[RMDB]
RNA sequence: GGGAACGACUCGAGUAGAGUCGAAAAUUUAUGCUGGAAUUGGCAUGGUCAAAUGUUGCAUCGGGAUCCAUCAUGACAGGUGCCCUGUUGAGUCUUCUAUCAUUGUUUGCAGAGAAUCCAGGAGCUACGUGUAUACGAAGUUCGCUUCGUAUACACGAAAAGAAACAACAACAACAAC
Reactivity to 2A3 in 0.01 (KOAc 150mM, MgCl2 10mM, bicine 150mM(pH8.5), 24C), signal-to-noise 2, nucleotides 027 to 126: u050u050u030a060u080g050c010u060g070g110a160a140u050u120g040g000c010a030u050g060g000u060c040a050a080a090u110g060u200u130g000c020a050u030c010g010g050g030a020u020c050c020a030u030c050a050u100g070a020c020a050g070g000u040g090c020c020c040u050g060u080u080g030a030g050u010c000u070u000c010u080a060u080c010a070u000u170g060u090u100u070g030c060a000g020a000g030a110a030u000c010c010a030g000g040a020g040c000u020a020
Reactivity to DMS in 0.01 (KOAc 150mM, MgCl2 10mM, bicine 150mM(pH8.5), 24C), signal-to-noise 5, nucleotides 027 to 126: u010u020u010a040u010g020c050u010g000g020a060a100u010u000g010g020c030a040u010g000g000u010c060a070a090a100u010g010u010u010g010c060a050u000c080g020g000g000a070u000c040c030a030u010c070a060u010g000a080c080a070g000g020u000g010c060c020c020u010g000u000u010g010a060g000u000c030u000u010c040u010a070u000c070a060u000u010g000u010u000u010g010c090a080g010a110g000a070a090u000c020c030a060g010g010a140g000c090u000a080
Chemical mapping of a 177-nucleotide RNA with 2A3 and DMS. The RNA was probed in 150 mM KOAc, 10 mM MgCl2 and 150 mM bicine (pH 8.5) at 24 C. 2A3 adducts were read by reverse transcription with SuperScript II with manganese. DMS adducts were read by reverse transcription with MarathonRT.